[RMDB]
Annotation:
An RNA of 177 nucleotides, treated with 2A3 and DMS and read out base by base. The RNA was probed in 150 mM KOAc, 10 mM MgCl2 and 150 mM bicine (pH 8.5) at 24 C. For DMS the reverse transcriptase was MarathonRT. It was measured as part of the RMDB library RFMREP.
RNA sequence: GGGAACGACUCGAGUAGAGUCGAAAAAUGCAGGAAAUGCGGGUAGCCGCUGCCGCAAUCGUCUCGGCGAUUGGCGGUAGAGGAAAGUCCAGGCUCGCCCAAGCUGAGAUGCUUGGAGUGUUCGUACGUAUAAGGACUAGUUCGCUAGUCCUUAUACAAAAGAAACAACAACAACAAC
Reactivity to 2A3 in 0.01 (KOAc 150mM, MgCl2 10mM, bicine 150mM(pH8.5), 24C), signal-to-noise 3, nucleotides 027 to 126: a000u100g020c040a030g080g130a070a080a050u140g020c020g000g000g030u040a030g060c010c010g010c020u000g000c000c000g000c000a000a010u010c000g030u010c020u020c110g170g000c020g000a010u000u030g210g020c000g010g000u000a000g000a000g000g040a130a100a020g060u010c030c030a020g050g000c010u010c010g010c010c000c000a000a000g000c000u020g020a030g010a050u060g000c010u000u000g030g020a100g030u090g030u080u090c070g010u070a070c050
Reactivity to DMS in 0.01 (KOAc 150mM, MgCl2 10mM, bicine 150mM(pH8.5), 24C), signal-to-noise 6, nucleotides 027 to 126: a090u010g020c080a110g010g010a060a070a070u000g020c030g000g000g010u000a110g010c010c010g010c010u000g020c000c010g010c000a030a010u000c000g010u000c030u010c300g010g000c000g000a010u000u000g020g040c000g000g000u000a000g010a030g000g000a070a080a130g000u000c040c030a110g000g010c020u000c050g000c050c010c000a010a010g000c000u010g000a190g000a050u000g000c000u000u000g000g000a240g010u000g010u000u000c050g010u000a170c260